An RNA of 177 nucleotides, treated with DMS and read out base by base. DMS adducts were read by reverse transcription with MarathonRT. The reactions ran in a buffer of 150 mM KOAc, 10 mM MgCl2 and 150 mM bicine (pH 8.5), at 24 C. Source: RMDB library OK2TST, as collected in RNAgym.
[RMDB]
RNA sequence: GGGAACGACUCGAGUAGAGUCGAAAAUGCCACCUUCAGUCAAAGUUAACGCUCAUGAUAUUAUACCGAAACUUGGGACACUGAAAUCUGGGCCAGUCUUACCUAGUAGUAGAUCUGAUUUAGCAGAGCGGGUAAUUUUAUUCGUAAAAUUACCCGCAAAAGAAACAACAACAACAAC
Reactivity to DMS in 0.01 (KOAc 150mM, MgCl2 10mM, bicine 150mM(pH8.5), 24C), signal-to-noise 1, nucleotides 027 to 126: u000g000c020c020a140c130c050u000u030c060a080g060u010c110a100a110a100g020u000u000a090a140c180g020c060u020c050a080u000g010a100u010a010u030u010a080u030a070c060c010g020a130a080a090c130u000u000g000g020g010a120c100a020c020u010g010a030a050a080u000c050u000g020g030g000c110c030a040g000u000c040u000u010a080c040c030u000a050g010u010a060g020u030a040g000a130u030c040u000g020a110u000u000u010a050g020c090a090g000a130